Source: RMDB library RNAMAK, as collected in RNAgym. Structure probing data (DMS and 2A3) for a 207-nucleotide construct. The DMS profile rests on 6,810 reads. For DMS the reverse transcriptase was MarathonRT. The reactions ran in a buffer of 150 mM KOAc, 10 mM MgCl2 and 150 mM bicine (pH 8.5), at 24 C.

RNA sequence: GGGAACGACUCGAGUAGAGUCGAAAAUCCUAAGUCUUCUUGGAGUGGAAAUCUCGCAUCGAUCGCUAUCGGAAACGAUAGCGGGAGCGAGGAUUCCACUAUGAAGAGAAGAUAUGGAAAACAGAUAUGGAUGAUCUUCGGAUCAUCCAUAUCUGAACAUGUAUGUAAUCUUCGGAUUACAUACAUGAAAAGAAACAACAACAACAAC
Reactivity to DMS in 0.01 (KOAc 150mM, MgCl2 10mM, bicine 150mM(pH8.5), 24C), signal-to-noise 3, nucleotides 027 to 156: u000c000c000u000a060a270g010u000c000u000u000c020u000u000g000g010a000g040u010g010g010a020a020a060u000c000u000c000g040c000a270u010c170g000a130u000c000g000c000u000a020u000c010g040g000a190a110a300c020g000a010u000a010g020c010g030g000g000a050g020c000g020a010g030g010a030u000u000c000c000a000c010u000a030u010g010a200a300g000a020g000a070a020g010a020u000a240u000g010g010a110a070a150a170c000a020g000a020u000a010u000g000g020a010u000g000a020u000c010u000u020c300g030g010a020u010c000a030u000c000c000a000u000a000u000c000u000g000a060a190
Reactivity to 2A3 in 0.01 (KOAc 150mM, MgCl2 10mM, bicine 150mM(pH8.5), 24C), signal-to-noise 5, nucleotides 027 to 156: u010c000c000u030a120a030g020u000c010u000u010c000u010u020g030g070a020g000u010g010g010a020a040a050u010c000u010c010g000c020a300u200c070g090a100u090c000g000c000u010a000u000c000g030g050a120a020a070c010g000a000u000a000g000c000g000g010g000a010g010c000g010a000g010g000a020u030u010c000c010a000c000u010a060u010g020a020a040g000a000g000a000a000g010a000u040a100u070g060g040a010a060a040a070c010a000g020a030u000a000u010g010g000a000u000g000a000u010c030u060u120c300g040g000a000u000c000a000u000c000c000a000u000a000u000c000u000g000a000a000
2A3 adducts were read by reverse transcription with SuperScript II with manganese.